This 177-nucleotide RNA was probed chemically with DMS and 2A3. The reactions ran in a buffer of 150 mM KOAc, 10 mM MgCl2 and 150 mM bicine (pH 8.5), at 24 C. For 2A3, 11,713 sequencing reads were counted. For 2A3 the reverse transcriptase was SuperScript II with manganese. The DMS profile rests on 22,621 reads. The data come from the RNA Mapping Database (RMDB), library M2PK50.

RNA sequence: GGGAACGACUCGAGUAGAGUCGAAAACCGUAUCGGUUCGCCGAUACGGAAAAGUUAAUGCUGCUAACACACAUCUUAAGCAUGGCGGUGGUAUCGCAGGUGGGACUCCCCAGUUCGCUGGGGAGAAUUAUUGUAUCACUUUCGAGUGAUACAAUAAAAAAGAAACAACAACAACAAC
Reactivity to DMS in 0.01 (KOAc 150mM, MgCl2 10mM, bicine 150mM(pH8.5), 24C), signal-to-noise 9, nucleotides 027 to 126: c010c000g020u000a000u000c000g010g010u000u010c210g030c000c000g010a010u000a010c000g010g000a010a020a050a100g010u000u000a070a080u010g010c030u000g000c030u000a080a120c060a050c050a060c050a040u010c040u010u010a120a120g020c120a030u000g010g010c130g010g010u000g000g000u000a070u010c150g010c030a030g000g020u010g010g010g010a260c010u000c010c000c000c000a010g010u000u010c170g020c010u000g000g010g010g000a000g000a020a030
Reactivity to 2A3 in 0.01 (KOAc 150mM, MgCl2 10mM, bicine 150mM(pH8.5), 24C), signal-to-noise 6, nucleotides 027 to 126: c000c000g000u010a000u010c010g010g030u050u050c150g050c080c010g000a000u000a000c000g000g000a040a070a010a010g050u060u140a090a060u160g060c010u010g020c020u060a100a010c030a010c010a010c010a100u040c030u140u200a100a050g050c050a050u050g040g010c110g070g010u040g030g060u080a050u120c040g010c020a000g040g040u090g040g020g040a020c000u010c000c000c000c000a000g000u030u070c140g020c070u020g000g020g000g000a010g000a000a000